[RMDB]
RNA sequence: GGGAACGACUCGAGUAGAGUCGAAAAGAUCUGCGCCGAUCCGAAACGCUAGCAAACAGCCCGCAUCAUGUCGUCUCCUAACUUCGACGUGGUGAAAUACUGAGCUUAUGCGAGUAAUCCUGUUAGCAAUAGAUCAGAACGUUCGCGUUCUGAUCAAACAGAUCAUCAUCUUCGGAUGAUGAUCUGUAAAAGAAACAACAACAACAAC
Reactivity to 2A3 in 0.01 (KOAc 150mM, MgCl2 10mM, bicine 150mM(pH8.5), 24C), signal-to-noise 6, nucleotides 027 to 156: g020a030u000c020u080g040c050g000c060c030g040a020u010c010c040g050a040a050a040c050g000c060u060a000g010c020a050a060a090c040a080g020c020c010c020g030c000a000u010c000a000u020g010u000c010g030u020c060u080c090c100u150a170a160c070u060u020c020g000a000c010g000u000g010g000u010g020a040a020a010u210a040c050u040g030a020g000c000u070u090a020u170g030c010g010a020g030u060a010a070u040c010c020u050g040u150u130a030g040c030a060a120u050a180g000a000u010c000a000g000a000a000c000g010u070u060c200g000c000g120u000u000c020u000g000a000u000c000a000a000
Reactivity to DMS in 0.01 (KOAc 150mM, MgCl2 10mM, bicine 150mM(pH8.5), 24C), signal-to-noise 2, nucleotides 027 to 156: g000a060u000c010u000g060c050g020c070c100g020a060u000c030c000g000a100a040a060c120g000c000u000a030g020c010a020a050a240c090a060g030c010c010c020g000c040a040u010c010a040u000g000u010c000g020u000c150u030c130c020u030a050a080c130u000u020c010g030a010c000g060u000g000g040u000g010a080a070a110u000a090c130u020g010a130g010c030u000u000a240u000g020c000g000a010g000u000a100a220u000c020c020u000g000u000u030a100g040c080a060a110u000a080g010a010u000c000a000g000a000a010c000g050u000u030c280g050c030g000u000u000c000u000g000a000u000c000a030a080